[RMDB]
RNA sequence: GGGAACGACUCGAGUAGAGUCGAAAAGUCAUGUGUUCGCACAUGACAUACAUCCUAAGUCCAUAGGCCGAGGAUAACGAGGAUCAUAUUCGGAAACGAAUAUGGGAGUCGUAUCUAUCCUAUGGAUAUGGAGAGCUCGUUCGGUUCGCCGAACGAACUGAUUCAGUGUGUUCGCACACUGAAUCAGAAAAGAAACAACAACAACAAC
Reactivity to DMS in 0.01 (KOAc 150mM, MgCl2 10mM, bicine 150mM(pH8.5), 24C), signal-to-noise 1, nucleotides 027 to 156: g020u000c000a000u000g010u010g040u000u000c300g000c030a030c000a000u000g010a030c000a050u000a050c170a120u000c010c010u000a080a200g000u010c000c000a000u000a000g000g000c110c070g000a220g000g020a060u000a060a100c030g020a040g010g000a300u000c030a010u000a010u010u000c000g050g000a210a190a220c010g040a000a000u000a000u000g000g000g010a300g000u010c020g000u000a070u000c040u000a110u010c000c000u000a010u000g000g060a020u000a140u000g000g010a010g000a180g000c020u000c000g000u030u000c000g020g000u020u000c300g020c000c000g000a010a070c000g000a000a000
Reactivity to 2A3 in 0.01 (KOAc 150mM, MgCl2 10mM, bicine 150mM(pH8.5), 24C), signal-to-noise 5, nucleotides 027 to 156: g010u000c000a000u010g020u000g050u040u110c270g070c110a000c000a000u010g000a000c010a000u110a020c020a060u010c000c000u040a120a060g030u000c000c000a000u000a010g010g030c040c080g300a300g040g010a040u070a270a190c010g000a000g060g020a010u040c000a000u000a010u010u000c000g010g080a040a070a100c010g000a010a000u000a000u010g010g010g010a020g140u000c000g000u000a010u000c000u010a050u010c000c000u000a010u010g000g000a000u010a010u030g000g010a120g000a010g080c050u010c040g000u000u000c000g010g040u050u070c280g020c080c010g020a000a000c000g000a020a000